Structure probing data (2A3 and DMS) for a 177-nucleotide construct.
RNA sequence: GGGAACGACUCGAGUAGAGUCGAAAAGAUAGAAAGUAUCAAGGUGUAAAAAGUGUGCACAAAACACCCACCACCCCUGUGGUGGGUGGUGCAUUCGCCUAUAUUCUGCGGAAUUUCGCCUGGCGUAAUUUACCAGUGCGUUCGCGCACUGGUAAAUAAAAGAAACAACAACAACAAC
Reactivity to 2A3 in 0.01 (KOAc 150mM, MgCl2 10mM, bicine 150mM(pH8.5), 24C), signal-to-noise 2, nucleotides 027 to 126: g020a000u270a020g090a020a270a010g060u120a020u170c120a100a020g000g040u050g010u090a140a100a000a000a000g040u030g010u010g100c010a020c000a030a140a120a010c000a000c010c000c010a020c000c000a000c000c120c040c150u120g000u030g000g030u000g000g000g000u000g000g000u040g000c000a000u060u030c010g020c010c010u030a030u060a050u110u020c020u050g020c140g090g000a110a150u000u040u130c080g010c010c010u050g090g040c020g000u060a060
Reactivity to DMS in 0.01 (KOAc 150mM, MgCl2 10mM, bicine 150mM(pH8.5), 24C), signal-to-noise 2, nucleotides 027 to 126: g050a020u020a030g000a080a100a130g010u000a050u030c060a120a050g000g000u000g010u010a060a130a170a010a180g000u010g000u000g020c010a000c010a070a040a050a300c000a020c000c000c000a020c010c000a020c000c250c150c300u020g030u010g000g010u010g000g000g000u000g000g000u010g010c020a030u000u010c030g000c020c020u020a040u020a070u000u030c010u000g010c060g000g020a040a070u000u010u020c090g020c000c000u000g000g000c170g000u020a050
For DMS the reverse transcriptase was MarathonRT.